This 177-nucleotide RNA was probed chemically with 2A3 and DMS. It was measured as part of the RMDB library VIROID. Values are in units of 0.01, from 0 to 300, in steps of 10.
RNA sequence: GGGAACGACUCGAGUAGAGUCGAAAAGGUGCCCUAUCCGAGCACUGCUGCUUCGGUAGAAAGGCUAAGCACGUCGCAAUGACGUAAGGUGGGGCUUUUCCCUUGAAGUUGAGCGGUCGACUUCAGACUAUUUCCGAUUCUUCGGAAUCGGAAAUAGAAAAGAAACAACAACAACAAC
Reactivity to 2A3 in 0.01 (KOAc 150mM, MgCl2 10mM, bicine 150mM(pH8.5), 24C), signal-to-noise 2, nucleotides 027 to 126: g070g030u080g010c010c030c000u020a040u000c020c020g040a020g000c020a010c230u110g020c010u030g010c010u080u030c170g150g000u060a030g140a100a170a000g100g000c030u040a000a070g040c070a020c010g000u000c000g040c260a230a200u300g000a000c000g010u010a000a010g000g000u010g000g020g000g000c000u050u000u000u000c000c000c090u010u060g010a010a000g000u010u010g040a060g080c180g060g300u060c010g000a000c000u010u000c010a010g050a030
Reactivity to DMS in 0.01 (KOAc 150mM, MgCl2 10mM, bicine 150mM(pH8.5), 24C), signal-to-noise 2, nucleotides 027 to 126: g010g030u010g000c010c000c010u000a050u010c020c040g010a090g010c020a050c050u010g000c020u000g010c010u000u030c140g050g020u000a020g020a070a080a130g000g010c030u000a100a130g030c160a040c040g020u000c010g000c280a170a100u010g010a010c020g010u000a060a090g010g020u000g000g000g000g000c000u000u000u000u000c000c000c000u010u000g010a010a010g010u000u010g020a040g000c160g010g000u000c010g010a040c010u000u000c010a040g010a210